[RMDB]
RNA sequence: GGGAACGACUCGAGUAGAGUCGAAAAACGUUGAUAGGGAUUUACUCCGAGGAGACGAACUACCACGAACAGGGGAUACUCUACCCGUGGCGUCUCCGUUUGACGAGUAAGUCCUAAGUCAACAUGCGGCGUCAACCCUUCGGGGUUGACAAAAGAAACAACAACAACAAC
Reactivity to DMS in 0.01 (KOAc 150mM, MgCl2 10mM, bicine 150mM(pH8.5), 24C), signal-to-noise 2, nucleotides 027 to 129: a140c100g020u040u000g000a020u020a200g000g030g070a030u070u070u070a020c000u000c000c000g020a100g000g060a000g000a070c020g010a000a000c110u130a300c050c000a030c040g140a080a300c180a100g000g000g000g000a180u010a140c030u000c030u000a140c200c110c020g010u040g030g060c030g010u020c040u010c020c010g000u020u050u090g050a100c300g010a040g020u030a000a000g010u000c050c000u010a000a000g030u030c000a060a000c040a060u030g000c120g050g030c100
Reactivity to 2A3 in 0.01 (KOAc 150mM, MgCl2 10mM, bicine 150mM(pH8.5), 24C), signal-to-noise 2, nucleotides 027 to 129: a000c070g000u000u000g000a000u010a080g000g000g000a000u000u000u000a000c000u000c000c010g010a010g000g000a000g010a000c010g000a050a040c090u080a050c080c010a000c010g030a150a040c090a180g000g020g000g080a040u260a250c000u000c000u030a030c040c020c000g010u010g010g010c000g000u040c000u000c010c000g010u000u000u030g030a000c000g000a000g000u000a010a010g000u000c000c000u020a010a010g010u000c020a000a000c000a000u070g090c030g150g000c010
Chemical mapping of a 170-nucleotide RNA with DMS and 2A3.
DMS (dimethyl sulfate) methylates the pairing face of unpaired adenines and cytosines.
For 2A3, 4,481 sequencing reads were counted.